The record gives the reactivity of an RNA of 207 nucleotides to 2A3.
Reactivities are given for positions 27 through 156.
2A3 is a SHAPE reagent: it acylates the 2'-hydroxyl of flexible nucleotides of all four kinds.
2A3 adducts were read by reverse transcription with SuperScript II with manganese.
The RNA was probed in 150 mM KOAc, 10 mM MgCl2 and 150 mM bicine (pH 8.5) at 24 C.

RNA sequence: GGGAACGACUCGAGUAGAGUCGAAAAGAUGGGCCUUCUGGGAAUGUACCUGGCCGCCCAGGAGGUCCUGAGGAAGAGAUAGACGGCCAGGGUCCGAUCAUACGAUAUAAACCUGCUCGACGUAUGAUCGGUUAUGACAAUUAAGAAGAGCAGGUUAGAUCGGCCUAAAUUUCGAUUUAGGCCGAUCAAAAGAAACAACAACAACAAC
Reactivity to 2A3 in 0.01 (KOAc 150mM, MgCl2 10mM, bicine 150mM(pH8.5), 24C), signal-to-noise 2, nucleotides 027 to 156: g030a040u080g000g010g010c000c000u000u000c010u000g000g050g060a080a000u110g020u110a140c020c010u020g000g000c020c020g000c000c000c000a000g000g010a000g040g000u010c000c000u010g000a020g040g090a050a030g060a020g060a150u050a170g150a050c010g010g000c000c000a000g000g000g000u010c000c000g000a000u000c000a000u000a000c020g080a020u030a020u070a150a120a020c000c000u010g030c020u000c010g030a030c000g030u000a010u020g000a000u000c000g000g000u000u010a000u010g000a000c040a010a090u180u230a220a040g050a070a000g000a010g000c010a000g000g000u000u000a020
Source: RMDB library OK3TST, as collected in RNAgym.